This 177-nucleotide RNA was probed chemically with 2A3 and DMS. 2A3 adducts were read by reverse transcription with SuperScript II with manganese. The DMS profile rests on 6,424 reads. Conditions: 150 mM KOAc, 10 mM MgCl2 and 150 mM bicine (pH 8.5), 24 C. Source: RMDB library OK2TST, as collected in RNAgym.

RNA sequence: GGGAACGACUCGAGUAGAGUCGAAAAGACGACUCCGGAAGUUCGGCGACGCGCGCGGACGCGGUAAUCGUCAUCAUUCCACGAUUACGUCGGCACCCGAUGACUUUUCGAUGCGGGCGCGGCGCACACCCCUUCCAUAUUUCGAUAUGGAAGGGGUAAAAGAAACAACAACAACAAC
Reactivity to 2A3 in 0.01 (KOAc 150mM, MgCl2 10mM, bicine 150mM(pH8.5), 24C), signal-to-noise 7, nucleotides 027 to 126: g020a010c000g000a010c010u000c020c010g030g040a150a080g040u010u030c020g030g020c010g050a200c120g050c030g020c030g070c020g110g030a030c040g000c010g130g010u050a030a040u020c020g050u000c010a020u080c010a060u080u000c020c020a100c100g080a120u250u260a060c040g040u030c060g150g000c040a030c020c040c030g020a040u060g050a090c090u160u120u160u160c100g100a090u220g110c000g020g020g010c010g020c000g020g010c000g020c010a030c020
Reactivity to DMS in 0.01 (KOAc 150mM, MgCl2 10mM, bicine 150mM(pH8.5), 24C), signal-to-noise 5, nucleotides 027 to 126: g000a050c030g010a020c040u000c000c060g010g010a150a160g010u000u000c030g000g020c010g030a100c170g020c090g010c030g020c030g000g010a050c030g010c030g010g010u000a040a110u000c020g010u000c040a070u000c140a140u010u000c040c040a070c110g000a140u000u010a070c030g000u000c020g040g030c060a100c070c030c020g000a040u000g010a090c110u000u000u000u010c070g020a130u010g010c000g010g000g010c020g020c010g000g000c000g010c070a100c230